Structure probing data (DMS and 2A3) for a 177-nucleotide construct. High 2A3 reactivity points to a flexible backbone, as in loops and unpaired stretches. The reactions ran in a buffer of 150 mM KOAc, 10 mM MgCl2 and 150 mM bicine (pH 8.5), at 24 C. For DMS, 2,220 sequencing reads were counted. Source: RMDB library OK1LIB, as collected in RNAgym.

RNA sequence: GGGAACGACUCGAGUAGAGUCGAAAAGCACGUUGGUUCAGAUGAUGGGCCCGCAUCUGUACGAAAGUGAGACGAAAGUCCAGCCCACGUGCAUGAGCACGCGGGCCCCGUGCUCUGCAGCAAAAGAAUAAUCGAGUACGUUCGCGUACUCGAUUAUAAAAGAAACAACAACAACAAC
Reactivity to DMS in 0.01 (KOAc 150mM, MgCl2 10mM, bicine 150mM(pH8.5), 24C), signal-to-noise 1, nucleotides 027 to 126: g060c010a020c010g000u000u000g010g030u000u000c000a020g000a010u000g020a000u040g000g010g000c000c000c000g090c010a000u000c000u000g000u020a000c020g020a150a070a130g000u000g000a100g000a010c010g020a110a130a190g000u000c040c030a090g000c000c000c060a010c050g000u000g000c020a100u020g010a050g000c010a000c030g030c090g010g000g000c010c000c000c010g030u000g000c020u000c040u000g000c090a100g060c120a120a040a200a190g000a100
Reactivity to 2A3 in 0.01 (KOAc 150mM, MgCl2 10mM, bicine 150mM(pH8.5), 24C), signal-to-noise 2, nucleotides 027 to 126: g040c010a020c000g050u050u070g010g020u100u100c040a010g000a040u020g000a040u070g030g000g000c000c010c000g000c000a010u000c000u040g110u100a070c090g200a070a070a030g120u120g040a180g010a040c030g080a070a030a000g010u000c010c010a030g000c000c000c000a010c000g000u000g000c000a000u070g010a000g020c020a000c010g000c060g020g000g000c000c000c000c010g000u000g000c000u000c020u050g050c000a140g000c030a040a050a060a000g180a020